[RMDB]
RNA sequence: GGGAACGACUCGAGUAGAGUCGAAAAGGAUGAUCUGGUCCCGGCCAGUGAUCCGAAUUAGUACCGGGAUUGCAUCGUCGAGCCGUCAGGGGCGAAGACGAGAACCUGAAAGCACGAAGCACUGGGCGGUGCGAGUGCGAGAUAUAACGCCCAACAAAGGUGAUAUAAUGUUCGCAUUAUAUCACCUAAAAGAAACAACAACAACAAC
Reactivity to 2A3 in 0.01 (KOAc 150mM, MgCl2 10mM, bicine 150mM(pH8.5), 24C), signal-to-noise 2, nucleotides 027 to 156: g040g000a040u050g000a030u060c000u000g000g000u040c030c010c000g030g060c030c000a030g010u050g050a030u000c010c010g010a030a060u170u080a100g070u080a070c000c010g000g000g010a030u020u180g090c050a060u010c000g020u010c010g020a010g010c000c010g120u240c180a090g080g070g010g000c010g030a070a010g010a000c010g000a010g000a000a030c020c010u100g060a140a050a000g020c010a010c030g020a050a000g000c010a010c050u080g030g000g000c030g000g000u010g000c010g010a010g010u010g000c010g020a000g030a000u180a010u010a090a080c050g000c010c020c000a020a000c070a030a110
Reactivity to DMS in 0.01 (KOAc 150mM, MgCl2 10mM, bicine 150mM(pH8.5), 24C), signal-to-noise 3, nucleotides 027 to 156: g010g010a060u010g010a130u010c020u000g000g010u000c000c060c140g000g080c000c030a130g020u000g000a100u000c040c050g010a120a130u010u000a130g010u000a070c060c020g020g000g040a040u000u000g000c090a150u000c030g040u000c020g010a300g000c020c070g030u010c110a140g030g010g020g040c030g020a080a220g000a080c060g010a110g010a060a070c040c000u000g000a110a100a170g010c020a080c000g000a160a290g020c030a040c040u010g000g020g010c100g000g020u010g000c020g000a220g010u000g020c010g010a060g000a110u000a100u000a100a110c020g020c000c000c010a070a110c140a130a150